Record summary:
The record gives the reactivity of an RNA of 207 nucleotides to 2A3 and DMS. Values are in units of 0.01, from 0 to 300, in steps of 10. The reactions ran in a buffer of 150 mM KOAc, 10 mM MgCl2 and 150 mM bicine (pH 8.5), at 24 C. For 2A3 the reverse transcriptase was SuperScript II with manganese. For 2A3, 1,537 sequencing reads were counted. The DMS profile rests on 2,022 reads.

RNA sequence: GGGAACGACUCGAGUAGAGUCGAAAAAGAGUAAAGGAGCAGGAGUGAAGUUGGAGAGCGAGCAGAGCAGGGGUUGGGUGGAGAGCAGAUGCAGAGUCUCCAUCAUCACAUAUUCUAAACAUUGUCUAAUAUGUUAUGAAUGACAUAAUUAAUAUUGAGUACAUACGUCAUUCGUGACGUAUGUACUAAAAGAAACAACAACAACAAC
Reactivity to 2A3 in 0.01 (KOAc 150mM, MgCl2 10mM, bicine 150mM(pH8.5), 24C), signal-to-noise 3, nucleotides 027 to 156: a000g110a020g010u120a050a030a030g030g030a020g000c020a000g030g020a020g010u090g070a080a030g020u070u030g040g010a100g000a000g040c040g000a010g000c050a040g000a030g000c030a020g020g000g000g030u040u040g050g000g010u040g010g040a050g010a000g000c050a020g010a070u110g000c020a020g020a010g140u000c000u000c000c000a030u030c010a000u010c010a010c000a030u050a020u050u100c050u150a000a130a110c080a150u120u160g040u060c010u000a040a000u010a030u030g010u000u030a060u060g070a110a050u060g020a050c030a090u240a070a080u300u190a110a080u220a050u170u140g040
Reactivity to DMS in 0.01 (KOAc 150mM, MgCl2 10mM, bicine 150mM(pH8.5), 24C), signal-to-noise 1, nucleotides 027 to 156: a070g000a110g030u000a050a090a140g000g030a030g060c030a060g000g000a090g030u000g010a050a150g000u030u020g070g070a110g010a070g040c090g000a130g050c050a190g030a090g020c030a060g000g030g040g010u000u010g010g000g060u010g000g010a070g000a080g030c060a100g020a150u000g000c050a140g000a190g010u000c000u000c000c030a060u000c030a030u000c000a020c050a030u000a070u000u000c130u000a080a060a060c040a150u000u010g000u000c060u010a110a070u000a030u000g020u000u000a090u010g000a060a120u010g010a110c010a040u010a030a090u020u010a060a080u010a170u000u000g000